[RMDB]
RNA sequence: GGGAACGACUCGAGUAGAGUCGAAAAAAAAAUUGUAAUCUUUUGUGUACUGUCUCUUGCUUUCAAGAUACAUAUGUAGGUUCAAUAUGGAAUCCAUAUUGGAUUCGUCACUCAAGUAUUCGACAAACUAGGGAUACGUGUUCGCACGUAUCCCUAGAAAAGAAACAACAACAACAAC
Reactivity to 2A3 in 0.01 (KOAc 150mM, MgCl2 10mM, bicine 150mM(pH8.5), 24C), signal-to-noise 2, nucleotides 027 to 126: a000a000a000a000a000u120u050g000u030a050a010u030c010u000u010u020u020g030u000g000u040a020c020u020g000u020c000u000c000u040u020g030c050u070u090u300c000a000a020g000a040u020a020c010a000u260a190u230g140u150a040g000g000u020u020c000a000a010u000a010u000g010g090a160a060u120c060c000a000u010a010u020u030g010g010a000u240u200c020g030u000c020a010c090u010c000a010a010g020u020a140u050u150c070g010a040c070a030a090a020
Reactivity to DMS in 0.01 (KOAc 150mM, MgCl2 10mM, bicine 150mM(pH8.5), 24C), signal-to-noise 1, nucleotides 027 to 126: a140a000a070a000a090u060u000g010u030a040a030u000c000u010u000u000u000g010u000g000u020a090c160u000g000u000c040u000c010u000u020g030c300u020u020u040c030a000a010g030a040u000a010c000a000u010a150u030g000u030a020g000g030u000u000c000a000a010u010a000u030g000g000a070a010u040c010c000a080u020a010u000u000g030g000a000u000u000c030g000u020c050a080c000u000c040a060a000g000u040a010u000u000c000g000a080c280a060a010a060
Chemical mapping of a 177-nucleotide RNA with 2A3 and DMS. High 2A3 reactivity points to a flexible backbone, as in loops and unpaired stretches. Values cover nucleotides 27 to 126. High DMS reactivity at an A or C suggests that its Watson-Crick edge is free.